Notes:
The record gives the reactivity of an RNA of 207 nucleotides to DMS and 2A3. The DMS profile rests on 2,816 reads. Reactivities are given for positions 27 through 156. The data come from the RNA Mapping Database (RMDB), library M2RFPK. Conditions: 150 mM KOAc, 10 mM MgCl2 and 150 mM bicine (pH 8.5), 24 C.

RNA sequence: GGGAACGACUCGAGUAGAGUCGAAAAGUGCCGGCAAUACAGUGUGUAUGGAGGUCUCAAUGGCUCGGAAGUGCCAGCAAACCGGCGUAGAUAUUAGCAGGCGUAUGGGCGUAAGACUUUUAUUGAAAAAAGUACAUAAGCUUCGGCUUAUGUACAACUUGGUGCUAAAGUUCGCUUUAGCACCAAGAAAAGAAACAACAACAACAAC
Reactivity to DMS in 0.01 (KOAc 150mM, MgCl2 10mM, bicine 150mM(pH8.5), 24C), signal-to-noise 2, nucleotides 027 to 156: g030u000g020c020c030g030g040c040a070a140u020a090c000a080g010u010g020u000g030u000a080u000g010g010a130g000g010u000c050u000c040a050a120u000g010g010c020u000c030g020g030a130a180g000u000g020c000c020a070g000c030a040a160a070c010c020g010g020c010g040u000a060g000a120u000a060u000u000a060g040c020a070g010g020c000g030u010a080u000g000g000g000c030g010u000a070a140g010a110c050u000u020u000u000a130u020u020g010a000a040a110a050a080a150g000u010a010c000a000u010a000a000g020c010u000u000c300g030g010c020u000u000a010u000g000u000a000c000a020a040
Reactivity to 2A3 in 0.01 (KOAc 150mM, MgCl2 10mM, bicine 150mM(pH8.5), 24C), signal-to-noise 3, nucleotides 027 to 156: g040u000g020c010c000g050g020c040a070a090u140a060c050a100g090u070g020u030g020u190a070u040g030g020a030g030g020u000c010u020c080a110a130u090g020g000c040u030c060g030g050a100a050g030u030g050c010c010a020g030c060a110a010a070c010c020g030g000c000g010u060a040g030a070u080a030u130u090a050g010c030a040g050g000c000g020u060a050u130g030g010g000c020g010u040a100a040g020a030c010u030u070u050u230a100u110u170g080a070a000a010a050a020a030g000u000a000c000a000u000a000a000g010c000u030u010c170g040g000c000u000u000a000u000g000u000a010c000a000a000